[RMDB]
RNA sequence: GGGAACGACUCGAGUAGAGUCGAAAAGAAGGCGCCGCCGCCUACGGCGUGCUGGUCACCCGGCCCGACGGCACCCGUGUCGAGGUCCACCUGGACCGGGAUUUCCGGGUUCUGGACACCGAACCGGUCAACGGAUCACGUUCGCGUGAUCCGUUGAAAAAGAAACAACAACAACAAC
Reactivity to DMS in 0.01 (KOAc 150mM, MgCl2 10mM, bicine 150mM(pH8.5), 24C), signal-to-noise 1, nucleotides 027 to 126: g010a040a040g000g010c090g040c020c000g000c050c040g030c080c010u010a110c110g000g000c000g000u010g000c020u000g030g020u030c150a120c060c000c000g000g000c090c020c000g010a050c150g000g000c100a090c070c000c000g000u010g020u000c030g050a250g000g040u000c070c150a190c150c070u000g000g010a070c030c000g000g020g000a110u020u040u010c010c000g000g000g000u010u000c050u010g010g000a070c120a040c020c020g000a040a080c040c010g000g000
Reactivity to 2A3 in 0.01 (KOAc 150mM, MgCl2 10mM, bicine 150mM(pH8.5), 24C), signal-to-noise 1, nucleotides 027 to 126: g120a010a060g060g020c040g000c050c040g000c000c020g020c050c040u090a030c030g000g030c050g030u020g140c030u020g010g100u050c050a070c040c000c000g040g000c000c030c010g000a060c040g000g020c020a050c000c000c010g050u070g030u080c010g040a000g000g030u000c010c030a160c070c020u090g030g000a080c140c000g000g000g000a010u140u070u000c000c000g020g000g000u090u030c020u020g040g040a050c020a020c020c050g020a090a060c010c040g000g020
Structure probing data (DMS and 2A3) for a 177-nucleotide construct. The RNA was probed in 150 mM KOAc, 10 mM MgCl2 and 150 mM bicine (pH 8.5) at 24 C. The data come from the RNA Mapping Database (RMDB), library OK1LIB. For DMS, 1,453 sequencing reads were counted.